[RMDB]
RNA sequence: GGGAACGACUCGAGUAGAGUCGAAAACACGAAUGUUGGCUAAUCCUGGUCGGACAUCAGGGGGUUAGUGCACUGGCAUAAGCCACCUUGGCGCUAAUAGAUACUAAUCGUAGCAUAGCUGAAUAAACCAGUACGAUAGUUUCGACUAUCGUACUGGAAAAGAAACAACAACAACAAC
Reactivity to 2A3 in 0.01 (KOAc 150mM, MgCl2 10mM, bicine 150mM(pH8.5), 24C), signal-to-noise 4, nucleotides 027 to 126: c090a020c140g080a050a160u110g020u080u070g060g000c020u030a010a030u070c010c010u050g040g000u050c040g020g040a060c010a130u020c030a030g020g000g000g000g010u040u030a030g000u020g020c000a010c060u050g060g000c020a040u050a300a040g020c000c000a070c050c010u020u160g060g000c010g000c010u010a040a050u050a120g040a010u060a080c050u060a060a060u050c020g080u060a000g050c030a070u020a040g000c020u070g050a070a010u200a090a060a070
Reactivity to DMS in 0.01 (KOAc 150mM, MgCl2 10mM, bicine 150mM(pH8.5), 24C), signal-to-noise 3, nucleotides 027 to 126: c120a140c190g000a050a040u020g000u010u050g000g040c000u030a040a110u020c020c020u000g050g030u000c130g000g020a170c090a060u030c060a010g000g000g000g010g030u000u000a050g020u020g020c050a160c120u020g010g000c000a130u020a040a170g000c040c000a040c080c070u020u020g020g020c070g020c030u020a010a020u020a120g000a100u000a120c140u000a030a060u020c080g000u000a040g020c060a070u010a070g020c040u020g020a110a030u010a060a110a060